[RMDB]
RNA sequence: GGGAACGACUCGAGUAGAGUCGAAAACAUGUGAUGCACACCGAGCCAUACCAUAUUAGCGAGGCGAGUGCCCGACAGAUUAACCAAGCAAUGGCAGAAAAGCGUCCAAUUAUCGCGAUUGGUACGACGAAGCCUAUAUUUUCGAAUAUAGGCUUCGAAAAGAAACAACAACAACAAC
Reactivity to DMS in 0.01 (KOAc 150mM, MgCl2 10mM, bicine 150mM(pH8.5), 24C), signal-to-noise 5, nucleotides 027 to 126: c120a070u010g020u010g010a100u010g010c060a080c050a100c030c030g020a170g010c020c030a070u010a160c100c070a080u000a060u010u010a050g010c030g010a160g000g010c040g000a100g020u000g020c030c060c040g010a060c090a050g000a110u010u000a100a090c060c040a070a090g010c090a070a040u000g010g020c040a100g010a060a050a060a100g010c040g000u000c010c010a040a010u000u000a080u020c190g020c170g010a030u000u000g000g010u000a020c040g000a190
Reactivity to 2A3 in 0.01 (KOAc 150mM, MgCl2 10mM, bicine 150mM(pH8.5), 24C), signal-to-noise 5, nucleotides 027 to 126: c030a060u140g030u060g080a090u120g030c020a010c010a010c040c010g030a020g010c020c020a040u070a150c020c020a040u060a100u250u160a060g050c030g030a020g010g000c040g050a060g030u080g000c020c010c000g040a030c020a020g070a040u060u120a050a030c040c020a040a000g020c020a070a140u080g070g020c030a030g080a120a080a010a010g040c000g000u020c000c000a030a020u080u020a120u230c120g000c040g090a010u000u040g010g040u120a040c010g020a010
An RNA of 177 nucleotides, treated with DMS and 2A3 and read out base by base. It was measured as part of the RMDB library OK2TST. 2A3 adducts were read by reverse transcription with SuperScript II with manganese. For DMS, 4,403 sequencing reads were counted. Values cover nucleotides 27 to 126. The reactions ran in a buffer of 150 mM KOAc, 10 mM MgCl2 and 150 mM bicine (pH 8.5), at 24 C.